[RMDB]
RNA sequence: GGGAACGACUCGAGUAGAGUCGAAAAUGUGAAUUCGUUCACAGUGUGUGAUAUGGAGCGAACUACAUCCGCCCAGCUUUGAUCAUAUCUCGGAAACGAGAUAUGGGAGCUGUAACAAGAUGCGCUCCUAAGUCCGACUGGGCGUUUCGACGCCCAACUGGGUGCAGUAGUUCGCUACUGCACCCAGAAAAGAAACAACAACAACAAC
Reactivity to 2A3 in 0.01 (KOAc 150mM, MgCl2 10mM, bicine 150mM(pH8.5), 24C), signal-to-noise 1, nucleotides 027 to 156: u080g000u000g020a000a020u130u060c110g040u130u060c060a000c020a150g010u140g000u020g070u120g210a040u020a000u070g030g000a040g000c000g060a070a090c090u160a010c200a100u120c070c020g050c030c110c000a020g010c050u300u300u040g040a060u050c000a020u000a000u000c000u000c000g000g020a000a020a070c000g000a000g000a010u000a000u000g000g010g010a000g000c070u100g060u170a120a060c090a190a000g130a100u180g000c010g000c000u000c000c000u010a110a010g000u030c070c050g000a070c140u020g000g000g000c010g010u080u010u030c190g090a020c040g020c010c000c000a000a000
This 207-nucleotide RNA was probed chemically with 2A3. Conditions: 150 mM KOAc, 10 mM MgCl2 and 150 mM bicine (pH 8.5), 24 C. It was measured as part of the RMDB library RNAMAK.